[RMDB]
RNA sequence: GGGAACGACUCGAGUAGAGUCGAAAAUCAGCGAGUUUGGGUUUAGGGCAGGGGUGUGGCUUUGCCGAAUAUGGACCUGAGUUCAAAUAUUUGCUCCACCACUCAUUAGCUUUGCUAGUGCUGUGACCUGAGGCAGGUCGCUUGGCCUCCUUGGGCCCUCGAUCCUUCUUUUCGAAGAAGGAUCGAGAAAAGAAACAACAACAACAAC
Reactivity to 2A3 in 0.01 (KOAc 150mM, MgCl2 10mM, bicine 150mM(pH8.5), 24C), signal-to-noise 1, nucleotides 027 to 156: u110c020a020g030c050g000a040g010u040u050u070g040g000g010u000u040u140a100g020g010g010c020a020g000g000g020g020u140g040u030g090g040c090u000u040u070g060c040c030g020a070a060u150a150u150g090g000a040c030c050u070g020a080g010u030u030c030a000a120a070u150a100u040u060u050g050c040u020c040c000a060c000c020a030c000u000c000a020u000u000a010g000c010u080u170u290g010c010u030a040g000u010g040c110u000g010u020g070a140c020c020u010g000a040g000g000c110a000g000g030u000c000g070c100u070u280g000g000c000c000u010c010c000u000u020g000g000g000c000c000